An RNA of 207 nucleotides, treated with DMS and 2A3 and read out base by base. Reactivities are given for positions 27 through 156. High 2A3 reactivity points to a flexible backbone, as in loops and unpaired stretches. For 2A3, 2,977 sequencing reads were counted.
[RMDB]
RNA sequence: GGGAACGACUCGAGUAGAGUCGAAAAGCUUAAUAACCUGCGCUGAGCCCUUCUCCCCCAGCUUGCCUGUGUCCUAGGGAAUUGGAAGGUCAUCCUCCACAGGAUCGUGUGGAAGUCCUGCUCGGGGUCCAAACAUGGUAAUUCGUUACCAUGUUAAAUACAAAUUAGUAUUCGUACUAAUUUGUAUAAAAGAAACAACAACAACAAC
Reactivity to DMS in 0.01 (KOAc 150mM, MgCl2 10mM, bicine 150mM(pH8.5), 24C), signal-to-noise 3, nucleotides 027 to 156: g010c030u010u000a070a130u000a070a060c030c020u000g030c050g020c040u000g020a120g020c030c010c030u010u000c040u000c030c010c010c010c030a100g000c050u010u000g000c050c010u000g030u010g010u010c040c020u010a110g010g030g020a070a160u000u010g010g010a110a080g020g010u000c060a100u000c020c010u000c000c050a050c010a070g010g000a070u000c070g010u000g030u000g010g010a110a080g000u000c010c020u000g020c020u000c060g010g020g030g020u000c060c050a100a020a030c000a010u010g000g010u000a020a050u000u000c260g020u000u000a020c000c000a000u000g010u000u000a010a060
Reactivity to 2A3 in 0.01 (KOAc 150mM, MgCl2 10mM, bicine 150mM(pH8.5), 24C), signal-to-noise 4, nucleotides 027 to 156: g010c010u140u160a060a030u080a170a240c010c050u090g040c020g000c060u070g060a050g030c010c020c010u060u050c100u100c030c000c010c020c000a010g000c020u020u060g040c000c010u030g020u000g020u050c000c010u020a050g010g000g080a050a100u130u090g050g010a040a020g050g020u050c010a060u030c030c010u000c000c010a050c010a020g090g050a140u110c040g070u030g000u020g090g010a050a030g010u000c000c000u020g020c020u030c030g010g000g000g020u010c030c010a020a040a010c000a000u000g020g000u010a020a040u060u050c120g060u090u000a000c000c000a010u000g000u000u010a000a040